[RMDB]
RNA sequence: GGGAACGACUCGAGUAGAGUCGAAAAGUGCACGACUUCGGUCGUGCACAAAUAUAGGCAGUCGAGUGCGUACGGCACAGUCAUACGCUGACGCCACGACAAAAAGUAACGUCUUCGGACGUUACAACAAAGUUUUUAGGUUCGCCUAAAAACUUUGAAAAGAAACAACAACAACAAC
Reactivity to 2A3 in 0.01 (KOAc 150mM, MgCl2 10mM, bicine 150mM(pH8.5), 24C), signal-to-noise 3, nucleotides 027 to 126: g010u000g020c010a000c010g010a020c040u050u090c200g040g000u010c010g010u010g020c020a010c000a010a000a000u020a000u010a000g100g020c080a020g010u010c000g090a030g130u200g040c010g000u030a180c010g020g030c040a030c050a200g070u130c050a060u070a150c060g000c020u030g020a010c010g000c020c010a010c030g040a010c030a030a080a020a020a010g000u000a000a010c000g010u000c010u010u050c160g060g000a000c000g000u010u000a000c000a000a000
Reactivity to DMS in 0.01 (KOAc 150mM, MgCl2 10mM, bicine 150mM(pH8.5), 24C), signal-to-noise 4, nucleotides 027 to 126: g000u000g000c000a010c000g010a030c000u000u010c160g040g010u010c000g020u000g010c020a000c000a010a020a040u010a100u000a070g020g020c080a100g010u000c010g010a140g010u000g020c000g030u000a050c060g010g000c020a110c190a120g030u010c180a060u010a040c080g010c020u000g000a030c020g010c000c010a180c070g000a030c090a060a070a100a070a100g000u000a000a000c000g000u000c000u000u020c210g010g000a000c000g010u000u000a000c000a100a140
Structure probing data (2A3 and DMS) for a 177-nucleotide construct. Values cover nucleotides 27 to 126. The reactions ran in a buffer of 150 mM KOAc, 10 mM MgCl2 and 150 mM bicine (pH 8.5), at 24 C. DMS adducts were read by reverse transcription with MarathonRT. The data come from the RNA Mapping Database (RMDB), library M2PK50.